Structure probing data (2A3 and DMS) for a 177-nucleotide construct.
RNA sequence: GGGAACGACUCGAGUAGAGUCGAAAAGCGGCUACGGGCCGAGCGGGCGCGCUUCGCGGCGGCCUACGCGCCGGUCAGCAUCCUGCCGCCGGACCAGUAUUUCGCGGUGGUGGUGCAGGCGACGCGCCGGUGUGUUUAUAUUCGUAUAAACACACCGAAAAGAAACAACAACAACAAC
Reactivity to 2A3 in 0.01 (KOAc 150mM, MgCl2 10mM, bicine 150mM(pH8.5), 24C), signal-to-noise 7, nucleotides 027 to 126: g030c010g030g010c020u090a150c210g130g170g000c030c020g010a030g040c080g030g030g010c070g000c010g000c120u070u060c030g010c020g100g000c000g010g010c000c020u060a100c060g010c030g000c010c010g040g060u110c040a010g000c000a010u020c000c010u010g010c000c010g010c030c070g010g000a030c030c030a080g060u190a300u080u090u080c040g000c010g010g000u010g010g040u170g000g000u020g000c010a020g080g000c010g000a020c010g000c000g000c020
Reactivity to DMS in 0.01 (KOAc 150mM, MgCl2 10mM, bicine 150mM(pH8.5), 24C), signal-to-noise 9, nucleotides 027 to 126: g010c020g010g010c020u000a100c180g020g010g020c010c010g010a100g020c080g010g010g020c020g010c030g010c130u000u010c100g010c070g020g010c010g000g010c010c020u010a060c180g010c110g020c010c010g020g010u000c040a100g020c020a020u000c010c020u000g000c000c010g010c050c050g020g000a030c130c080a180g000u010a150u000u000u000c140g000c010g010g010u000g000g010u010g020g010u000g010c010a100g010g010c000g000a030c020g000c010g010c070
Values cover nucleotides 27 to 126. For 2A3 the reverse transcriptase was SuperScript II with manganese. The reactions ran in a buffer of 150 mM KOAc, 10 mM MgCl2 and 150 mM bicine (pH 8.5), at 24 C.